[RMDB]
RNA sequence: GGGAACGACUCGAGUAGAGUCGAAAAACUUGGCGAGUCUAACUACGCCAUGGCUGCUUUAUUUAGCGUAACGCUAGAUUAGCCUCGUCCCGAUAAGAUCGGGAGAGCCAUCGUCGCUCAGUUGCUCUGAUCUGCCGGCCGCUGGUCAAGCCGAUGUCCUUUUUAGUAUCUUCGGAUACUAAAAAGGAAAAGAAACAACAACAACAAC
Reactivity to 2A3 in 0.01 (KOAc 150mM, MgCl2 10mM, bicine 150mM(pH8.5), 24C), signal-to-noise 5, nucleotides 027 to 156: a010c020u030u030g020g000c000g020a030g030u070c090u150a070a090c040u190a190c050g010c010c010a010u020g050g000c050u060g000c010u120u150u070a030u040u060u040a040g010c040g070u150a140a060c160g010c010u010a010g000a040u030u040a020g020c000c000u060c030g160u030c000c000c010g010a010u070a180a120g080a090u020c000g010g000g000a040g000a000g040c000c010a080u070c040g130u050c030g000c040u040c030a050g020u060u070g060c030u020c050u090g060a090u010c040u060g020c010c010g030g000c010c020g030c050u040g030g000u060c050a030a030g010c020c020g050a040u080g050u050
Reactivity to DMS in 0.01 (KOAc 150mM, MgCl2 10mM, bicine 150mM(pH8.5), 24C), signal-to-noise 2, nucleotides 027 to 156: a090c040u000u000g000g000c000g000a060g010u020c040u000a060a110c030u000a020c000g030c020c020a010u010g020g000c040u020g000c060u010u000u010a050u010u000u010a040g010c010g000u000a090a110c140g020c010u000a040g000a030u020u000a090g010c010c040u000c030g010u000c000c010c000g000a080u000a110a160g040a300u000c000g000g030g000a120g000a020g010c030c010a060u000c030g020u000c040g030c040u000c060a090g020u010u010g010c000u010c090u010g020a130u000c040u010g010c050c000g020g050c030c020g030c050u000g010g020u010c090a090a070g000c020c000g020a090u000g010u000
The data come from the RNA Mapping Database (RMDB), library RSTRND. The record gives the reactivity of an RNA of 207 nucleotides to 2A3 and DMS. 2A3 is a SHAPE reagent: it acylates the 2'-hydroxyl of flexible nucleotides of all four kinds. The reactions ran in a buffer of 150 mM KOAc, 10 mM MgCl2 and 150 mM bicine (pH 8.5), at 24 C. For DMS, 3,901 sequencing reads were counted. 2A3 adducts were read by reverse transcription with SuperScript II with manganese.